RNA sequence: GGGAACGACUCGAGUAGAGUCGAAAAAGCGAUUCGUCGCUAGUUCUGCGUACUACGACAGACAUGCUAGACGUCAGAGGAGGUUCCCAAAUAGGAACCUCCGACGAAGACGUCAUAGCAACAGCUGUCGUAUCGCUCGCCGGGGCUUCGGCCCCAAAGAAAUAGUGACUUUCGAGUCACUAUUUCUAAAAGAAACAACAACAACAAC
Reactivity to DMS in 0.01 (KOAc 150mM, MgCl2 10mM, bicine 150mM(pH8.5), 24C), signal-to-noise 2, nucleotides 027 to 156: a050g020c040g000a080u000u000c200g040u010c000g020c010u010a060g020u000u000c030u000g000c020g030u000a080c110u000a010c030g000a040c020a010g000a080c050a300u000g000c010u000a070g020a050c010g000u000c010a060g010a280g030g020a060g020g010u000u000c000c000c020a060a180a220u020a060g010g010a000a010c000c000u010c000c000g010a060c130g050a140a200g000a030c000g000u000c000a030u000a030g030c000a040a090c080a200g030c030u000g040u000c010g020u000a020u010c050g030c010u000c030g020c050c110g000g010g060g030c010u000u000c220g020g030c010c020c000c000a000a080
Reactivity to 2A3 in 0.01 (KOAc 150mM, MgCl2 10mM, bicine 150mM(pH8.5), 24C), signal-to-noise 2, nucleotides 027 to 156: a000g040c010g000a030u100u110c160g060u030c000g140c010u020a020g140u080u040c040u040g010c010g010u040a090c050u020a000c020g010a010c000a020g060a080c030a070u050g020c000u000a000g000a010c000g000u000c000a020g000a050g070g000a000g010g000u000u000c020c020c000a020a190a080u170a030g000g000a000a000c000c000u010c000c000g000a030c000g010a040a030g020a000c000g000u010c010a180u000a010g000c010a030a020c060a100g040c000u000g000u000c000g000u000a000u020c010g020c020u030c040g120c060c090g010g000g020g000c000u050u090c110g120g000c000c000c020c060a030a090